[RMDB]
RNA sequence: GGGAACGACUCGAGUAGAGUCGAAAAGAUAUGGAGAACUACAGCCGCCCUCGCUCUCGGAAACGAGAGAACUACGAGUAACAAGCUGCUCCUAAGUCAAACUUACUGGUGUUCGCACCAGUAAGAAUCCCAUUACUCUCUUCGGAGAGUAAUGGGAAAAAGAAACAACAACAACAAC
Reactivity to 2A3 in 0.01 (KOAc 150mM, MgCl2 10mM, bicine 150mM(pH8.5), 24C), signal-to-noise 1, nucleotides 027 to 126: g020a030u090a050u280g000g010a000g000a100a090c080u100a060c300a020g010c020c010g000c010c050c000u000c000g000c010u000c000u000c030g050g000a090a050a050c000g000a000g000a000g030a000a000c090u190a030c070g030a000g040u110a060a130c020a100a110g000c020u020g020c000u010c000c010u010a180a040g030u060c050a020a040a150c000u020u000a000c000u000g000g000u000g060u030u100c170g080c050a000c000c010a020g020u000a000a000g000a000a020
Reactivity to DMS in 0.01 (KOAc 150mM, MgCl2 10mM, bicine 150mM(pH8.5), 24C), signal-to-noise 1, nucleotides 027 to 126: g000a010u000a300u040g000g000a020g020a050a060c020u010a300c000a040g060c000c040g000c300c050c000u000c040g030c000u000c000u000c000g000g040a070a110a200c010g000a050g000a000g000a020a050c220u000a300c040g000a010g040u000a100a120c120a140a070g010c000u000g000c000u000c000c000u000a130a080g000u030c070a050a090a100c000u000u000a000c000u000g000g000u000g000u000u000c300g000c020a000c000c000a000g000u000a000a000g000a140a090

About this RNA
Structure probing data (2A3 and DMS) for a 177-nucleotide construct. For 2A3 the reverse transcriptase was SuperScript II with manganese. The reactions ran in a buffer of 150 mM KOAc, 10 mM MgCl2 and 150 mM bicine (pH 8.5), at 24 C. DMS adducts were read by reverse transcription with MarathonRT. The DMS profile rests on 658 reads.